[RMDB]
RNA sequence: GGGAACGACUCGAGUAGAGUCGAAAAUCAAGACAUAUUUACUCUUGUUAGGUGAAAGUUGGUGGUUGCCAUGCCAGCCCGUACAUCCGAGAAGGACUCUAUGUAGUAGGAAGUCGAGAGCCUAUGAUCAAUGAUGCUGAUUCGUCAGCAUCAUUGAAAAAGAAACAACAACAACAAC
Reactivity to 2A3 in 0.01 (KOAc 150mM, MgCl2 10mM, bicine 150mM(pH8.5), 24C), signal-to-noise 9, nucleotides 027 to 126: u070c010a010a000g070a030c040a040u220a150u090u210u170a100c050u030c010u040u040g040u110u100a070g020g030u070g060a100a080a060g040u080u070g030g020u010g010g060u040u090g120c040c010a030u090g020c010c000a060g080c020c000c010g020u040a050c010a060u000c020c020g040a040g050a090a030g110g010a020c000u000c010u030a060u110g080u020a070g050u040a030g090g120a110a010g020u030c010g000a010g000a010g140c010c010u090a110u120g060a030
Reactivity to DMS in 0.01 (KOAc 150mM, MgCl2 10mM, bicine 150mM(pH8.5), 24C), signal-to-noise 5, nucleotides 027 to 126: u010c030a050a040g000a060c150a090u020a130u050u020u040a090c140u010c010u000u000g000u000u010a070g030g020u010g000a060a130a080g000u010u000g000g000u010g010g010u010u020g030c110c090a060u010g000c040c030a090g000c010c020c030g010u010a100c120a050u020c030c020g000a100g000a110a130g020g000a040c020u000c030u010a040u000g020u010a090g010u000a080g000g000a080a040g020u000c040g010a100g000a130g000c020c000u000a070u020g000a170
Chemical mapping of a 177-nucleotide RNA with 2A3 and DMS. DMS adducts were read by reverse transcription with MarathonRT. Conditions: 150 mM KOAc, 10 mM MgCl2 and 150 mM bicine (pH 8.5), 24 C.